[RMDB]
RNA sequence: GGGAACGACUCGAGUAGAGUCGAAAAAUGUGCGGCAAAGAAACAUUGUUUAUGCAAAGGCACUUCGCAAUGUGUGCUCAAACAUUGCUUAUUCAAACACGCUUCACAAUGUGCGACAAGGAAACAUAAAACGUUUAGUACUUCGGUACUAAACGAACUGACAUUCCAAGUUCGCUUGGAAUGUCAGAAAAGAAACAACAACAACAAC
Reactivity to 2A3 in 0.01 (KOAc 150mM, MgCl2 10mM, bicine 150mM(pH8.5), 24C), signal-to-noise 4, nucleotides 027 to 156: a010u150g020u060g070c040g030g000c110a100a060a070g060a060a140a010c040a030u030u060g050u080u130u090a130u160g010c060a080a090a070g140g000c010a000c000u070u070c030g000c030a030a040u040g000u010g010u030g060c050u080c130a060a060a020c010a010u010u000g000c000u090u110a120u110u080c100a020a070a050c080a020c080g000c010u030u040c020a000c020a050a050u090g010u020g040c020g020a010c040a040a040g030g030a060a090a020c070a020u170a100a060a040a000c010g000u000u000u000a000g000u000a000c000u000u030c210g060g000u000a000c000u010a010a000a000c000g000a000a000
Reactivity to DMS in 0.01 (KOAc 150mM, MgCl2 10mM, bicine 150mM(pH8.5), 24C), signal-to-noise 2, nucleotides 027 to 156: a060u000g010u000g020c020g000g060c150a100a130a160g020a110a020a100c010a080u000u000g030u000u000u010a120u030g070c060a070a190a190g010g020c010a040c020u000u000c140g030c110a080a030u000g020u010g010u010g030c100u020c080a110a130a040c030a020u000u000g020c030u000u000a070u010u010c080a070a100a120c060a060c070g000c070u010u000c050a050c060a090a120u010g000u000g020c090g050a150c090a060a030g040g000a080a080a030c090a050u000a030a050a100a140c010g050u000u000u010a010g020u000a010c000u000u020c300g020g030u000a010c000u000a000a000a010c020g000a000a050